[RMDB]
RNA sequence: GGGAACGACUCGAGUAGAGUCGAAAAUUAUUGAAUCCUUUGGUGGCGACGCUAAUAACAUUACUUUAAUGGGUCAGUCUGCAGGCAGUAUGAGCAUUUUGACUUUACUUAAAAUACCUGACAUUGACGUACUAACGUCUUUCGAGACGUUAGUACGAAAAGAAACAACAACAACAAC
Reactivity to DMS in 0.01 (KOAc 150mM, MgCl2 10mM, bicine 150mM(pH8.5), 24C), signal-to-noise 3, nucleotides 027 to 126: u010u010a130u000u010g010a150a140u000c030c020u000u000u000g050g030u000g010g020c070g000a100c100g010c050u010a090a090u000a120a110c080a050u000u000a060c100u000u010u000a040a060u000g000g010g020u000c060a060g040u010c070u000g020c060a010g000g000c080a060g010u000a050u000g000a070g010c040a120u000u000u000u020g000a050c010u000u000u000a020c010u000u000a050a050a100a110u010a100c020c030u010g010a080c160a080u020u000g000a180
Reactivity to 2A3 in 0.01 (KOAc 150mM, MgCl2 10mM, bicine 150mM(pH8.5), 24C), signal-to-noise 2, nucleotides 027 to 126: u110u040a070u040u130g090a040a080u070c010c000u060u030u040g010g010u010g030g050c040g000a040c020g040c020u040a090a110u090a180a050c020a070u040u130a070c090u200u140u200a090a040u100g050g000g000u030c000a000g000u000c030u050g020c020a040g030g000c020a000g000u080a020u100g080a080g060c080a090u000u000u070u030g000a020c000u010u050u030a010c020u030u060a030a050a040a010u080a100c000c010u040g030a040c020a070u040u090g050a020
The data come from the RNA Mapping Database (RMDB), library OK2TST. Chemical mapping of a 177-nucleotide RNA with DMS and 2A3. 2A3 adducts were read by reverse transcription with SuperScript II with manganese. The RNA was probed in 150 mM KOAc, 10 mM MgCl2 and 150 mM bicine (pH 8.5) at 24 C.